Chemical mapping of a 177-nucleotide RNA with 2A3 and DMS.
The reactions ran in a buffer of 150 mM KOAc, 10 mM MgCl2 and 150 mM bicine (pH 8.5), at 24 C.

RNA sequence: GGGAACGACUCGAGUAGAGUCGAAAAGCUGAUGAACCUCAGAAAGAUGUUUAUGAGUUGCGCUAUUCAGGCGCUAUUAGGUUUGAUAGUACACUUUCUGGGUUUGAAACCAUAAUGAAAGUGUUGAAUGAAAUAGUCUGUUCGCAGACUAUUUCAUAAAAGAAACAACAACAACAAC
Reactivity to 2A3 in 0.01 (KOAc 150mM, MgCl2 10mM, bicine 150mM(pH8.5), 24C), signal-to-noise 2, nucleotides 027 to 126: g010c010u040g010a020u080g000a030a000c000c020u030c050a020g140a060a050a010g070a110u050g030u060u110u040a070u060g040a060g080u060u110g030c000g000c000u010a070u160u200c080a090g000g040c000g020c020u010a040u010u130a030g080g000u030u040u110g090a030u010a040g100u050a000c010a000c010u040u000u000c020u040g010g020g000u020u040u040g000a010a000a000c020c000a030u130a200a100u210g030a060a060a010g040u040g010u060u060g050a020
Reactivity to DMS in 0.01 (KOAc 150mM, MgCl2 10mM, bicine 150mM(pH8.5), 24C), signal-to-noise 6, nucleotides 027 to 126: g020c060u000g010a090u010g000a030a030c030c030u000c020a060g010a080a070a070g010a070u010g010u000u000u000a030u010g000a080g010u000u000g000c010g010c010u000a110u010u000c300a130g010g010c010g010c010u000a010u000u010a090g010g010u010u000u010g010a080u000a080g010u010a030c010a010c000u000u000u000c000u000g000g010g010u000u010u010g000a140a100a110c020c010a080u010a070a070u010g000a030a040a030g010u000g010u000u000g000a120